The record gives the reactivity of an RNA of 207 nucleotides to DMS and 2A3. The DMS profile rests on 3,861 reads. For 2A3, 2,161 sequencing reads were counted. In probing experiments dimethyl sulfate is read out at A N1 and C N3, which are open when not base-paired. The RNA was probed in 150 mM KOAc, 10 mM MgCl2 and 150 mM bicine (pH 8.5) at 24 C. It was measured as part of the RMDB library OK3TST.

RNA sequence: GGGAACGACUCGAGUAGAGUCGAAAAGUGGGUAAAACUAAUUUGUUUUGCAGCCUUCACCUUGUACUGGAUAUUCAAACAUAUUACCUAGUUAAUUAAAUCUCUUCAUAAUAUGAUAAUGCUUGUUUGCACACUGACUCCAAACAGCAGUCACGUAUCCAUUUUACAAAUUCGUUUGUAAAAUGGAAAAAGAAACAACAACAACAAC
Reactivity to DMS in 0.01 (KOAc 150mM, MgCl2 10mM, bicine 150mM(pH8.5), 24C), signal-to-noise 2, nucleotides 027 to 156: g030u010g010g040g050u000a030a070a070a060c040u010a090a120u000u000u010g000u000u000u000u000g020c000a130g040c030c030u000u000c030a070c040c020u000u010g010u000a080c030u010g030g020a200u010a080u000u000c040a130a100a190c030a060u000a040u000u000a010c010c030u010a080g010u000u010a070a170u000u010a070a090a150u000c040u000c030u010u010c010a040u000a040a080u000a030u000g000a130u010a030a130u000g000c060u000u020g000u000u000u000g010c020a090c050a150c050u010g010a080c020u000c030c010a020a080a060c070a080g050c040a070g040u010c030a040c040g010u000a180
Reactivity to 2A3 in 0.01 (KOAc 150mM, MgCl2 10mM, bicine 150mM(pH8.5), 24C), signal-to-noise 5, nucleotides 027 to 156: g050u040g020g040g020u070a020a030a020a010c040u080a100a250u140u160u150g020u030u060u040u040g020c030a030g100c020c000u080u090c070a120c040c000u040u080g070u090a050c030u030g010g020a040u040a070u110u180c070a070a140a060c020a060u100a040u080u100a060c000c030u030a020g050u050u100a130a090u170u060a120a170a160u060c080u040c000u190u040c060a050u120a260a030u090a070u160g040a040u060a200a060u080g000c040u070u060g040u030u020u050g020c040a020c010a010c070u100g070a070c020u040c050c010a040a120a100c010a020g020c010a000g030u040c030a000c110g090u080a060